[RMDB]
RNA sequence: GGGAACGACUCGAGUAGAGUCGAAAAUAAAACCGCGAAGAGAACCAAGCCUUGAGACACAAGGAGGGAUGUCUCAAGGCUUGGUUCUCGACUUGUGUCGAGUCGUUCCCAAUCCCUCCGCAAAAAACUAGAAUAUUAGAUUCGUCUAAUAUUCUAGAAAAGAAACAACAACAACAAC
Reactivity to DMS in 0.01 (KOAc 150mM, MgCl2 10mM, bicine 150mM(pH8.5), 24C), signal-to-noise 1, nucleotides 027 to 126: u040a080a060a110a120c170c100g040c120g000a080a150g010a080g020a000a040c010c000a030a020g030c000c000u000u000g010a020g020a030c000a060c300a010a050g040g030a060g000g000g000a030u000g030u000c000u020c020a000a010g010g010c010u010u000g000g000u000u000c000u000c000g020a000c020u000u000g010u010g000u000c000g020a000g000u000c010g020u000u000c010c000c010a080a030u000c000c000c000u000c010c010g040c110a000a060a060a050a050a070